[RMDB]
RNA sequence: GGGAACGACUCGAGUAGAGUCGAAAAAGUGGAAUCAACUGGAAAGUUGAACUGUAAAAAGUGAUAGUCUUGUACACGUAAGAAUAUUAAUCGUAGUAGUAUCCUGAGUACCACGGAGCACGUGAAAGACACAAGGACCUUUCGAGGUCCUUGUGUCAAAAGAAACAACAACAACAAC
Reactivity to DMS in 0.01 (KOAc 150mM, MgCl2 10mM, bicine 150mM(pH8.5), 24C), signal-to-noise 2, nucleotides 027 to 126: a140g030u040g000g000a230a090u030c010a000a060c000u000g010g040a300a100a010g000u000u010g010a130a000c000u000g000u060a020a110a090a050a060g070u000g000a040u000a010g000u000c030u020u000g020u060a150c010a000c100g000u030a010a060g010a050a070u080a030u030u030a040a110u000c070g000u040a050g020u020a010g000u010a000u020c000c020u010g000a070g000u000a090c080c010a000c060g090g000a050g060c150a060c080g000u000g000a070a000a140
Reactivity to 2A3 in 0.01 (KOAc 150mM, MgCl2 10mM, bicine 150mM(pH8.5), 24C), signal-to-noise 2, nucleotides 027 to 126: a000g020u020g050g040a050a030u050c050a000a030c000u000g130g060a140a050a000g000u000u000g040a030a010c010u010g050u080a000a080a040a030a030g070u060g010a080u070a000g040u000c040u200u080g050u040a030c010a000c050g100u020a000a070g120a030a000u100a000u190u210a130a070u130c090g000u000a010g020u000a050g000u000a080u000c000c000u020g030a050g050u030a010c000c000a000c050g000g020a000g010c060a010c000g000u020g040a020a080a070